RNA sequence: GGGAACGACUCGAGUAGAGUCGAAAACGAUCAGUCUUCGGACUGAUCGAAAUAAACUUGACAAUCGCCGGUCAAGAAAAACGGCAUAAUAAGAUAGCUGAAAAAGUGGCGGGUUCGCCCGCCACAAUCCUUAUCAACAGUUCGCUGUUGAUAAGGAAAAAGAAACAACAACAACAAC
Reactivity to 2A3 in 0.01 (KOAc 150mM, MgCl2 10mM, bicine 150mM(pH8.5), 24C), signal-to-noise 2, nucleotides 027 to 126: c020g000a000u000c000a000g010u020c010u050u090c180g080g010a010c010u010g000a000u000c000g000a000a000a000u030a000a070a020c000u010u020g000a000c000a030a100u030c060g020c160c020g050g000u020c020a020a020g100a060a050a010a010a000c030g000g000c060a040u040a190a090u100a300a010g080a240u160a080g040c010u000g100a120a130a000a000a040g020u000g000g000c030g010g000g030u040u060c220g060c050c020c020g020c000c000a000c010a000a020
Reactivity to DMS in 0.01 (KOAc 150mM, MgCl2 10mM, bicine 150mM(pH8.5), 24C), signal-to-noise 2, nucleotides 027 to 126: c040g020a000u000c010a010g000u000c000u000u010c160g030g010a000c010u000g000a000u000c000g000a020a080a070u000a080a090a110c020u000u000g020a020c020a050a040u010c150g020c130c030g000g000u000c010a000a000g000a050a040a050a070a170c070g010g010c020a080u000a100a110u000a150a110g000a110u000a070g000c020u000g000a060a050a090a130a090g030u000g000g040c000g000g000g010u000u010c270g000c000c000c000g000c000c000a000c000a040a030